The record gives the reactivity of an RNA of 177 nucleotides to DMS and 2A3.
RNA sequence: GGGAACGACUCGAGUAGAGUCGAAAAAAAAGAUAUGGAUUGAGCUAGCUGCUAUACCACGUUGAAAGAAGAUCGGAAACGAUCUUCUGGAGUGGUAGCAGCUUGGACCUCAAUCCUAAGUCAAAAACCUAUGUGUAUGCUUCGGCAUACACAUAGGAAAAGAAACAACAACAACAAC
Reactivity to DMS in 0.01 (KOAc 150mM, MgCl2 10mM, bicine 150mM(pH8.5), 24C), signal-to-noise 2, nucleotides 027 to 126: a060a030a110a080g000a020u010a300u010g000g000a010u000u000g000a020g000c020u000a020g030c010u010g010c000u010a150u000a140c010c010a050c010g000u010u040g000a170a180a020g000a000a000g020a000u010c000g020g000a150a080a160c010g010a000u000c000u000u000c000u000g000g000a040g000u000g010g010u000a000g010c000a000g000c020u000u000g020g000a060c300c010u000c010a030a010u000c000c010u000a020a090g000u010c000a120a040a070a160a130
Reactivity to 2A3 in 0.01 (KOAc 150mM, MgCl2 10mM, bicine 150mM(pH8.5), 24C), signal-to-noise 2, nucleotides 027 to 126: a000a030a000a040g070a050u100a010u130g010g000a000u010u010g010a000g020c010u010a000g010c020u010g040c010u070a040u090a300c000c000a010c030g270u300u020g010a000a000a010g010a010a010g000a000u000c010g030g000a020a080a040c010g000a010u030c000u010u000c000u000g000g010a000g000u000g000g020u010a000g000c000a000g000c010u000u010g000g050a030c010c030u000c010a010a000u010c010c000u020a060a000g050u010c060a020a010a000a140a160
Values cover nucleotides 27 to 126. It was measured as part of the RMDB library TTRDES. DMS adducts were read by reverse transcription with MarathonRT.